[RMDB]
RNA sequence: GGGAACGACUCGAGUAGAGUCGAAAAUUGAUAUUAACUAUCGUACUAUAUACAACGAAACAUCUAUUUAUGACGCGGUCAGUUAUGAUGCGUAUAAUACGUUAGUCUAUCUAUUAAACAGAAAUGGUGAUUUUGAGACGAUUACGACUAGUGGAUGUCAAUAUUUAGAGUUCGCUCUAAAUAUUGAAAAAGAAACAACAACAACAAC
Reactivity to 2A3 in 0.01 (KOAc 150mM, MgCl2 10mM, bicine 150mM(pH8.5), 24C), signal-to-noise 9, nucleotides 027 to 156: u060u030g000a000u020a030u080u180a050a020c010u000a010u030c000g020u010a010c050u010a020u020a010u020a130c070a130a060c130g120a110a080a030c030a020u000c030u060a100u050u210u090a090u090g020a010c040g030c100g300g040u020c010a020g020u040u090a070u220g010a010u020g020c020g000u010a010u010a030a040u010a010c000g000u010u010a000g010u000c010u010a010u000c010u000a050u050u110a110a090a050c060a030g120a070a110a050u110g020g020u030g040a070u030u050u080u090g060a070g000a020c050g010a020u040u090a030c070g020a020c060u040a030g040u020g060g040a040u080g020
Reactivity to DMS in 0.01 (KOAc 150mM, MgCl2 10mM, bicine 150mM(pH8.5), 24C), signal-to-noise 6, nucleotides 027 to 156: u000u000g000a040u000a030u000u000a050a030c010u000a020u000c000g020u000a020c020u000a010u010a030u000a040c030a060a190c060g010a130a120a050c020a040u000c010u000a190u010u000u010a100u020g010a040c010g030c030g010g010u000c040a170g020u000u000a110u000g010a090u010g030c020g020u010a020u000a010a020u000a010c020g020u000u000a010g020u000c060u000a050u000c030u000a080u000u000a060a080a150c060a110g010a070a050a080u000g010g020u000g010a130u000u000u000u000g010a160g010a100c060g000a090u000u000a040c050g010a080c060u000a080g030u000g010g010a130u000g010